[RMDB]
RNA sequence: GGGAACGACUCGAGUAGAGUCGAAAAAAAACUUCCACGGGCAACUGUGGGACGGCUCUGUAAAAAAGGAGAGGGAGUUCAUGAACAGCAACUCCCACUUCCAGUGGAUCGAAGGCACGCCGCGAGGGAGCGUAUCGAAAUUCGUUUCGAUACGCUCAAAAGAAACAACAACAACAAC
Reactivity to 2A3 in 0.01 (KOAc 150mM, MgCl2 10mM, bicine 150mM(pH8.5), 24C), signal-to-noise 2, nucleotides 027 to 126: a000a000a040a010c010u030u020c000c000a000c000g040g010g010c030a050a030c050u010g030u000g010g000g010a020c020g020g000c020u000c020u020g110u140a060a010a000a000a000a150g040g000a010g010a050g020g000g000a020g000u000u000c040a030u180g120a150a050c060a070g050c030a000a010c000u000c000c030c040a080c010u030u000c010c000a040g030u050g060g030a050u040c060g020a050a030g070g000c030a000c000g000c020c000g000c000g010a000g030g050
Reactivity to DMS in 0.01 (KOAc 150mM, MgCl2 10mM, bicine 150mM(pH8.5), 24C), signal-to-noise 2, nucleotides 027 to 126: a050a010a070a040c170u020u020c000c000a000c060g030g000g010c300a090a030c030u000g020u000g010g010g010a030c090g000g020c020u000c020u000g000u050a010a060a080a040a080a070g000g000a010g000a120g000g020g010a010g030u000u030c040a160u020g020a140a130c300a130g020c180a000a000c000u000c000c000c000a060c000u000u010c010c010a080g030u010g000g000a050u010c100g010a110a090g000g000c030a010c070g030c010c030g020c060g000a100g000g000